[RMDB]
RNA sequence: GGGAACGACUCGAGUAGAGUCGAAAAGGGUGAUCAAAGAUCAGGGAUCUCUUCUCACCACGUAUUCAAGUGAAACUACUGAACUAUGGUUCUGAGGGGACCGGAACAUGUACAUAGAGGUGCGUUCGGACCGUCCUACUUUCGAGUAGGACGGUCCAAAAGAAACAACAACAACAAC
Reactivity to 2A3 in 0.01 (KOAc 150mM, MgCl2 10mM, bicine 150mM(pH8.5), 24C), signal-to-noise 2, nucleotides 027 to 126: g060g000g000u060g020a010u040c110a180a080a000g040a040u070c090a030g060g100g000a030u040c020u000c000u120u010c040u020c000a080c020c000a010c040g040u030a280u000u030c000a170a000g030u000g160a300a110a020c040u020a040c030u040g030a080a000c000u010a060u300g060g030u120u170c010u000g030a030g000g000g000g000a060c010c000g060g000a040a000c010a010u160g080u150a000c000a190u080a100g100a030g000g110u030g010c020g030u050u050c030